Description:
The record gives the reactivity of an RNA of 177 nucleotides to DMS and 2A3. For DMS, 10,674 sequencing reads were counted. The reactions ran in a buffer of 150 mM KOAc, 10 mM MgCl2 and 150 mM bicine (pH 8.5), at 24 C. Values cover nucleotides 27 to 126. Source: RMDB library TTRINS, as collected in RNAgym.

RNA sequence: GGGAACGACUCGAGUAGAGUCGAAAAGAUAUGGAAUCGGGAGUAUCUUAACCGAAAACGAUAAGAAUCUAUCGGAAACGAUAGAAUUCUUUUGACGUUUUCGGUUAAGAUACAGAUUCCUAAGUCACCAAUACAGUAAGUUCGCUUACUGUAUUGGAAAAGAAACAACAACAACAAC
Reactivity to DMS in 0.01 (KOAc 150mM, MgCl2 10mM, bicine 150mM(pH8.5), 24C), signal-to-noise 6, nucleotides 027 to 126: g010a060u010a300u010g000g010a010a010u010c000g010g010g030a180g010u000a000u000c000u000u010a000a010c000c000g010a000a010a010a010c000g020a190u010a010a010g010a020a020u000c000u000a000u000c000g010g000a140a120a250c000g010a010u000a010g000a050a060u000u000c000u010u000u000u000g010a210c110g020u000u000u000u000c000g000g000u000u000a000a000g000a000u000a000c000a040g000a010u000u000c000c000u010a040a130g010u000c030a280
Reactivity to 2A3 in 0.01 (KOAc 150mM, MgCl2 10mM, bicine 150mM(pH8.5), 24C), signal-to-noise 2, nucleotides 027 to 126: g000a010u030a030u130g000g010a010a000u000c020g000g050g250a300g030u010a010u030c000u010u000a010a020c010c000g000a020a010a000a010c000g030a060u020a100a010g000a000a000u000c010u010a010u020c010g020g030a120a030a040c020g000a010u020a010g020a090a050u010u000c000u020u100u040u120g210a040c030g000u000u000u020u000c000g000g010u010u010a000a000g010a000u000a000c000a000g010a000u000u000c000c000u010a010a010g020u020c000a010